[RMDB]
RNA sequence: GGGAACGACUCGAGUAGAGUCGAAAAGAUAUGGAAGAGGCGACGAUCUACGGGUCGGAAACGACCCUGUAGGGAGCCUCUUCCUAAGUCAAACCACCCUCCUGCUGUUCGCAGCAGGAGGGUGGAACUCAUAACUUAGGUUCGCCUAAGUUAUGAGAAAAGAAACAACAACAACAAC
Reactivity to DMS in 0.01 (KOAc 150mM, MgCl2 10mM, bicine 150mM(pH8.5), 24C), signal-to-noise 3, nucleotides 027 to 126: g000a060u000a300u000g000g000a010a010g000a020g010g010c000g010a100c280g000a030u010c010u000a010c000g000g000g010u000c000g010g000a080a100a240c000g010a010c000c000c000u010g040u000a000g000g000g000a030g010c000c000u000c000u000u000c000c000u000a010a070g010u000c030a070a140a260c000c000a010c010c010c000u010c000c000u020g000c000u000g000u000u010c200g010c010a010g000c020a010g000g010a000g010g010g020u000g000g000a010a040
Reactivity to 2A3 in 0.01 (KOAc 150mM, MgCl2 10mM, bicine 150mM(pH8.5), 24C), signal-to-noise 2, nucleotides 027 to 126: g010a010u070a040u170g000g000a000a010g000a000g010g020c020g010a300c030g010a170u010c000u020a000c000g010g000g010u010c010g050g020a060a050a000c000g000a000c020c040c040u060g000u000a010g000g020g000a000g010c000c000u010c000u010u000c000c000u010a000a010g000u000c010a010a010a020c010c000a000c000c010c010u000c000c000u000g000c040u040g080u100u110c300g020c220a000g030c000a000g000g010a000g000g000g010u010g000g000a000a000